An RNA of 207 nucleotides, treated with DMS and 2A3 and read out base by base. In probing experiments dimethyl sulfate is read out at A N1 and C N3, which are open when not base-paired. Values cover nucleotides 27 to 156.
RNA sequence: GGGAACGACUCGAGUAGAGUCGAAAAUGGGUGAAAUCGACCGUAUCCGUGUUGAUAUCACUGACGCCACUCAAUCUAAUCCUCGUGCCAUUGUAGACAAGAUUGUUGAAGUUUACAGAGAUCUCGCUGAAAACAACCGUAUUGGCAGCAUCAACAAUAAUACCCUGUUGUUCGCAACAGGGUAUUAAAAAGAAACAACAACAACAAC
Reactivity to DMS in 0.01 (KOAc 150mM, MgCl2 10mM, bicine 150mM(pH8.5), 24C), signal-to-noise 2, nucleotides 027 to 156: u000g000g010g040u000g000a020a200a090u000c000g000a030c040c020g040u000a140u010c110c100g010u000g030u000u020g020a080u000a140u000c050a020c020u000g000a110c060g000c160c010a050c060u000c020a070a090u000c050u010a130a120u000c030c000u010c060g010u010g020c010c030a100u000u000g010u000a190g000a070c030a050a050g000a100u010u000g010u010u000g040a040a290g000u000u010u000a190c060a110g020a190g020a070u000c090u000c050g040c050u010g000a120a080a070a060c050a050a030c060c090g000u000a300u000u000g040g030c000a090g000c090a130u000c030a060a030c080a090a100
Reactivity to 2A3 in 0.01 (KOAc 150mM, MgCl2 10mM, bicine 150mM(pH8.5), 24C), signal-to-noise 3, nucleotides 027 to 156: u140g070g000g010u050g030a070a020a000u050c020g000a030c040c000g070u180a110u120c190c060g050u110g000u130u000g020a010u040a020u070c000a010c020u030g050a030c060g070c030c020a040c040u060c010a050a100u000c030u120a060a060u020c020c030u110c040g000u040g050c000c050a060u060u110g040u070a040g010a060c040a080a030g070a210u010u070g030u030u020g020a080a010g000u000u020u040a110c050a040g020a040g000a140u000c090u030c110g050c030u050g040a010a060a040a060c060a020a090c060c090g080u120a140u060u110g050g000c040a010g030c000a020u090c010a020a060c010a020a030

Source: RMDB library OK3TST, as collected in RNAgym.